[RMDB]
RNA sequence: GGGAACGACUCGAGUAGAGUCGAAAAGUACAGCAUAAAUUGUAGUGGAGUGGCAAAAGAAGGGUUAGUCAAGAGUGUAAAAGUCAGCACUUAGGGCUCUAUAUGCCUGCCGUGUAGAGGAGGUUCCAUUUUAUACAUCAGACAAUAGAACCUGGGAACAUAAGCCAUGCUUCGGCAUGGCUUAUGUAAAAGAAACAACAACAACAAC
Reactivity to DMS in 0.01 (KOAc 150mM, MgCl2 10mM, bicine 150mM(pH8.5), 24C), signal-to-noise 1, nucleotides 027 to 156: g020u000a040c020a100g060c010a150u000a040a090a070u010u010g050u000a090g020u000g000g020a250g000u000g010g040c060a090a140a070a090g020a050a080g000g000g050u010u000a050g020u000c020a080a110g020a110g020u010g050u000a030a020a070a080g020u010c070a110g000c040a030c030u000u000a220g020g010g000c020u000c040u000a000u010a070u030g040c020c030u000g040c170c100g000u010g020u000a050g020a060g030g000a140g000g000u010u010c020c030a090u000u000u000u000a070u010a150c000a050u000c040a090g000a020c070a020a090u000a070g000a010a080c040c030u000g010g050g000a050
Reactivity to 2A3 in 0.01 (KOAc 150mM, MgCl2 10mM, bicine 150mM(pH8.5), 24C), signal-to-noise 2, nucleotides 027 to 156: g040u040a010c020a040g000c030a080u080a200a210a160u180u140g040u120a050g010u040g000g020a050g000u030g000g060c050a220a020a000a000g050a030a010g010g030g020u050u080a010g020u040c050a040a080g040a020g030u080g040u080a050a050a050a050g090u030c030a010g000c000a010c020u020u080a010g020g040g010c020u000c010u110a030u080a050u250g020c010c010u020g040c040c000g050u060g090u100a030g020a060g010g000a010g040g000u080u010c000c000a000u050u080u010u030a080u020a010c020a070u030c010a010g030a080c030a020a070u050a070g010a030a010c020c000u010g070g010g010a030